Chemical mapping of a 177-nucleotide RNA with DMS and 2A3.
For DMS the reverse transcriptase was MarathonRT.

RNA sequence: GGGAACGACUCGAGUAGAGUCGAAAACACCGUUCGCCGCUGCAGGCGGUCGGCCGCCGCGAUGAAGGCGAGCUCGGGGGAUCAGGGGAGCCCCCCGUGCUUCCUGCGCUUCCCGCGGCCUGUGCGGGACAUGACCCGGUUUCGACCGGGUCAUGUCAAAAGAAACAACAACAACAAC
Reactivity to DMS in 0.01 (KOAc 150mM, MgCl2 10mM, bicine 150mM(pH8.5), 24C), signal-to-noise 1, nucleotides 027 to 126: c120a280c020c020g010u010u000c080g000c050c000g020c060u000g030c180a120g010g040c000g010g060u000c110g030g000c070c120g000c030c040g000c020g020a060u010g000a040a020g030g020c120g010a010g000c010u000c000g000g010g010g000g010a180u000c120a150g020g010g000g020a300g030c190c010c000c010c050c030g010u010g000c000u000u020c080c060u000g010c040g010c040u000u000c000c150c060g000c000g000g020c000c000u010g000u010g030c050g010g020
Reactivity to 2A3 in 0.01 (KOAc 150mM, MgCl2 10mM, bicine 150mM(pH8.5), 24C), signal-to-noise 2, nucleotides 027 to 126: c020a020c030c020g010u180u180c030g000c010c010g070c110u240g100c080a130g090g060c020g000g020u080c050g030g020c080c020g000c000c030g030c050g040a070u150g090a030a010g000g020c040g010a010g000c000u010c000g000g020g000g010g010a020u050c090a180g040g080g030g000a030g020c010c000c000c000c000c000g000u000g020c000u050u080c020c110u150g000c210g000c000u020u010c000c010c000g020c000g010g010c020c010u090g000u030g050c050g040g050